[RMDB]
RNA sequence: GGGAACGACUCGAGUAGAGUCGAAAAGUGCUAGUGUCAACGACGUUGUCGUUGGCGCGACGUCAUCAAAUUGCGGGAAAUGUCCAGGACGAAAUGGGAUACCAAGCACGGCAGCACACGUCAUUCGUGCUGGAGUGUGGCCGAGUUAAUGCACUCGCCUCUAAAUCACGUUCGCGUGAUUUAGAGGAAAAGAAACAACAACAACAAC
Reactivity to DMS in 0.01 (KOAc 150mM, MgCl2 10mM, bicine 150mM(pH8.5), 24C), signal-to-noise 1, nucleotides 027 to 156: g020u000g000c030u010a130g000u000g020u010c040a020a010c000g030a000c000g060u000u000g000u010c000g000u000u000g020g000c010g030c010g020a030c080g000u010c040a080u000c070a080a160a110u010u010g010c020g000g000g010a050a050a040u010g020u010c000c020a100g040g010a080c060g000a060a080a070u000g010g020g000a180u000a080c030c050a070a200g000c050a050c020g010g000c010a090g010c040a020c010a090c080g030u000c040a120u020u000c090g030u000g030c060u000g000g000a060g000u010g030u000g010g020c010c020g010a100g000u000u000a080a110u000g010c050a090c000u000c030g040
Reactivity to 2A3 in 0.01 (KOAc 150mM, MgCl2 10mM, bicine 150mM(pH8.5), 24C), signal-to-noise 3, nucleotides 027 to 156: g110u120g030c030u120a000g010u000g000u000c000a010a000c000g020a020c180g280u120u300g030u080c010g000u000u000g000g030c000g000c000g000a000c040g040u050c000a030u030c020a060a060a130u180u160g070c040g000g000g020a060a070a080u170g060u000c010c000a030g040g030a030c030g080a040a020a100u090g020g030g040a020u070a130c020c050a030a000g010c010a010c020g080g000c020a010g030c010a010c000a000c040g080u060c090a120u140u080c040g000u010g030c000u000g000g020a030g000u020g020u030g030g010c010c000g030a010g000u030u150a110a050u130g010c000a000c000u010c000g010

Source information
An RNA of 207 nucleotides, treated with DMS and 2A3 and read out base by base. It was measured as part of the RMDB library ARCHII. For 2A3 the reverse transcriptase was SuperScript II with manganese. Conditions: 150 mM KOAc, 10 mM MgCl2 and 150 mM bicine (pH 8.5), 24 C.